[RMDB]
RNA sequence: GGGAACGACUCGAGUAGAGUCGAAAAGAGAUCGCAAGAAUAAUCAGAAGAGAAGUUGACCCAAACAUAGUGAUCCAAGUAUUCGGACUUUUCAGGCAUUGGGGUCACCCUUUCAUAGAUUAUCAAGUCGUGCUGAGAAUUUCGAUUCUCAGCACGAAAAAGAAACAACAACAACAAC
Reactivity to DMS in 0.01 (KOAc 150mM, MgCl2 10mM, bicine 150mM(pH8.5), 24C), signal-to-noise 2, nucleotides 027 to 126: g000a110g000a010u000c000g000c090a120a180g000a070a020u000a000a000u000c010a080g010a270a120g010a020g030a000a120g010u030u010g000a030c020c050c000a020a020a180c060a120u020a050g020u000g010a120u000c010c080a030a100g040u080a180u020u000c150g000g000a020c060u070u000u020u030c040a060g000g000c090a040u030u000g000g010g010g010u000c030a000c020c000c050u000u000u030c000a090u010a030g000a000u020u000a030u000c030a120a110g020
Reactivity to 2A3 in 0.01 (KOAc 150mM, MgCl2 10mM, bicine 150mM(pH8.5), 24C), signal-to-noise 3, nucleotides 027 to 126: g050a000g050a010u190c070g040c130a000a030g010a200a000u000a010a000u000c020a000g100a130a010g120a020g000a150a100g010u130u110g030a000c000c000c000a050a050a020c030a050u140a020g110u010g030a160u000c000c000a120a000g090u130a290u030u300c060g000g000a020c000u240u160u040u080c120a080g090g090c090a050u100u210g050g000g040g010u000c000a010c020c000c000u030u110u080c110a150u110a120g000a020u010u020a000u040c020a000a040g040

An RNA of 177 nucleotides, treated with DMS and 2A3 and read out base by base. It was measured as part of the RMDB library OK1LIB. Values cover nucleotides 27 to 126. The reactions ran in a buffer of 150 mM KOAc, 10 mM MgCl2 and 150 mM bicine (pH 8.5), at 24 C.